The record gives the reactivity of an RNA of 207 nucleotides to 2A3 and DMS. DMS adducts were read by reverse transcription with MarathonRT. The reactions ran in a buffer of 150 mM KOAc, 10 mM MgCl2 and 150 mM bicine (pH 8.5), at 24 C.
[RMDB]
RNA sequence: GGGAACGACUCGAGUAGAGUCGAAAACUCUGGUUAAUUCGGACGGUUGCUAUUCAUGCUCAGGCUUUAUUCAGUGUCCUACCAAGAAAUAACUUCAGCACCCACAACCUAUCCUUAGCAAAUCCAUGGAAAGCAAAGUCCCUCUCUUGUAGGACUACAAUCUACGUUCAUUCGUGAACGUAGAUUGAAAAGAAACAACAACAACAAC
Reactivity to 2A3 in 0.01 (KOAc 150mM, MgCl2 10mM, bicine 150mM(pH8.5), 24C), signal-to-noise 6, nucleotides 027 to 156: c030u030c030u040g040g030u100u090a100a070u200u130c060g030g010a020c030g070g060u080u030g010c030u090a080u160u110c040a040u100g020c010u040c060a030g040g000c030u120u110u110a100u150u140c030a050g080u010g010u070c000c000u020a040c040c060a020a000g030a030a090a030u120a030a020c010u100u070c040a010g010c030a060c010c030c010a060c030a050a090c020c020u070a070u070c010c000u030u040a000g020c040a080a050a060u030c060c020a050u070g020g050a080a060a030g010c050a110a040a010g030u010c020c010c000u040c010u010c000u020u040g010u030a010g020g000a000c000u000a010
Reactivity to DMS in 0.01 (KOAc 150mM, MgCl2 10mM, bicine 150mM(pH8.5), 24C), signal-to-noise 3, nucleotides 027 to 156: c040u000c030u000g010g020u000u000a020a180u000u000c050g010g020a090c080g030g010u000u020g030c000u000a140u000u000c060a070u000g030c020u000c070a130g020g020c020u010u000u000a090u020u010c090a140g010u000g030u000c010c010u000a070c060c020a050a110g030a050a080a100u000a050a090c030u000u000c040a080g040c040a120c010c020c050a120c060a070a080c040c030u000a090u000c020c020u000u000a110g020c050a070a070a090u010c030c030a040u010g040g010a050a100a060g000c020a060a060a090g020u000c010c010c040u000c100u000c060u020u010g040u010a050g000g000a070c000u010a170
Background: 2A3 adducts were read by reverse transcription with SuperScript II with manganese.